The record gives the reactivity of an RNA of 207 nucleotides to 2A3 and DMS. Conditions: 150 mM KOAc, 10 mM MgCl2 and 150 mM bicine (pH 8.5), 24 C. For 2A3, 2,376 sequencing reads were counted. The data come from the RNA Mapping Database (RMDB), library OK3TST.
RNA sequence: GGGAACGACUCGAGUAGAGUCGAAAAAUGCUGGCAAUGGUCAAAAACAUCCUUUCAAGAGUCACCACCCAGAGAGCAUCAUUCCUCAGAUACAUGAAGAAGUUCAUGAUCAGAGGACGACAUCUCUCCAAAGGCCAGCCAAUGCCUGGAAGGAUUACCUUUUACCCGAUUUCGAUCGGGUAAAAGGAAAAGAAACAACAACAACAAC
Reactivity to 2A3 in 0.01 (KOAc 150mM, MgCl2 10mM, bicine 150mM(pH8.5), 24C), signal-to-noise 4, nucleotides 027 to 156: a000u040g000c000u000g000g010c040a100a220u150g030g050u100c070a050a060a070a050a090c000a120u040c010c010u020u010u010c090a180a100g040a080g050u060c040a000c060c010a020c020c010c020a010g000a000g010a000g000c070a030u020c020a030u190u090c010c000u000c010a000g010a020u080a180c000a020u010g000a000a040g100a190a030g210u030u000c000a000u000g010a000u000c010a020g010a000g010g010a000c000g020a020c020a140u080c000u010c000u000c000c020a070a100a060g070g010c000c000a000g010c000c010a120a100u140g030c010c040u010g040g010a000a000g000g000a010u040u100a050
Reactivity to DMS in 0.01 (KOAc 150mM, MgCl2 10mM, bicine 150mM(pH8.5), 24C), signal-to-noise 1, nucleotides 027 to 156: a110u010g030c040u000g000g000c000a130a150u000g000g000u010c110a070a050a080a070a040c020a120u000c010c010u020u050u010c010a080a110g010a090g000u020c040a090c030c020a110c020c010c050a170g010a040g010a030g000c300a090u010c040a160u010u000c010c000u020c000a070g010a130u000a080c040a000u010g030a020a080g030a140a080g000u000u000c000a000u000g020a060u000c010a120g030a060g000g010a000c060g000a050c060a070u010c000u000c020u010c000c040a030a200a090g020g000c040c000a060g060c060c070a060a080u010g010c020c020u000g040g000a050a020g010g010a120u000u010a170